RNA sequence: GGGAACGACUCGAGUAGAGUCGAAAACUUAGCAGAUUAGGCGUUGUUAUGCCUUAGUGGUCCUUACUCCAUGCAAAGCUUGCGUGCAAGCGGGGUAUUGUGCCGCGGGGACAACUGGUCGGGAGCUGGGCCGCUCCCCUGAUGAGCCCAUGGCAGGGGAGAAUGGAUUGUUCGCAAUCCAUUCUCCAAAAGAAACAACAACAACAAC
Reactivity to 2A3 in 0.01 (KOAc 150mM, MgCl2 10mM, bicine 150mM(pH8.5), 24C), signal-to-noise 1, nucleotides 027 to 156: c040u060u030a010g040c040a030g000a300u100u130a080g050g030c020g010u010u090g040u050u100a090u070g050c020c020u110u160a040g040u030g000g000u000c000c000u000u040a000c030u000c010c000a100u200g070c050a020a090a060g000c020u080u100g090c030g160u190g020c000a000a020g020c040g030g040g000g020u050a010u030u020g040u130g000c030c030g020c040g000g000g010g000a010c020a080a050c110u070g110g070u150c020g030g020g020a000g020c020u000g000g200g000c060c010g030c000u010c000c000c000c030u080g030a110u040g030a040g060c000c000c050a050u060g030g000c050a050g000g010

Notes
This 207-nucleotide RNA was probed chemically with 2A3. Reactivities are given for positions 27 through 156. It was measured as part of the RMDB library VIROID. 2A3 adducts were read by reverse transcription with SuperScript II with manganese. For 2A3, 627 sequencing reads were counted. Reactivities are rounded to 0.1 and cut off at 0 and 3. 2A3 is a SHAPE reagent: it acylates the 2'-hydroxyl of flexible nucleotides of all four kinds.